An RNA of 177 nucleotides, treated with DMS and 2A3 and read out base by base. The reactions ran in a buffer of 150 mM KOAc, 10 mM MgCl2 and 150 mM bicine (pH 8.5), at 24 C. Values cover nucleotides 27 to 126. Source: RMDB library TTRDES, as collected in RNAgym. 2A3 adducts were read by reverse transcription with SuperScript II with manganese.
RNA sequence: GGGAACGACUCGAGUAGAGUCGAAAAGAUAUGGACGCAGGUAUGGAGAUACAAUCGGAAACGAUUGAAUAUCGUUGAAAUACUGCGUCCUAAGUCAAAGUAUCAGUGACUUCGGUCACUGAUACAAUCCUAAACCUUUGUUCGCAAAGGUUUAGGAAAAAGAAACAACAACAACAAC
Reactivity to DMS in 0.01 (KOAc 150mM, MgCl2 10mM, bicine 150mM(pH8.5), 24C), signal-to-noise 4, nucleotides 027 to 126: g010a010u000a100u010g000g000a030c000g030c000a020g010g020u000a020u000g000g020a110g020a020u000a080c000a010a010u000c000g010g000a030a010a050c000g010a000u000u000g010a170a230u000a010u000c000g020u000u000g010a240a190a020u000a050c000u010g010c000g020u010c000c000u000a010a060g000u000c010a140a170a140g000u000a000u000c000a010g000u010g000a010c000u000u020c290g030g000u000c000a010c000u010g000a000u000a000c010a090a080
Reactivity to 2A3 in 0.01 (KOAc 150mM, MgCl2 10mM, bicine 150mM(pH8.5), 24C), signal-to-noise 3, nucleotides 027 to 126: g020a000u020a010u070g000g000a000c000g010c030a010g130g140u170a040u100g150g180a100g010a050u010a020c000a000a000u000c010g000g000a010a020a000c010g000a010u020u040g020a130a130u050a000u020c030g040u170u250g130a020a050a000u020a020c000u000g000c000g000u020c000c000u000a010a000g000u000c040a210a010a050g010u000a000u000c000a010g000u000g000a010c000u060u160c300g080g000u000c010a000c000u000g000a000u000a010c000a000a000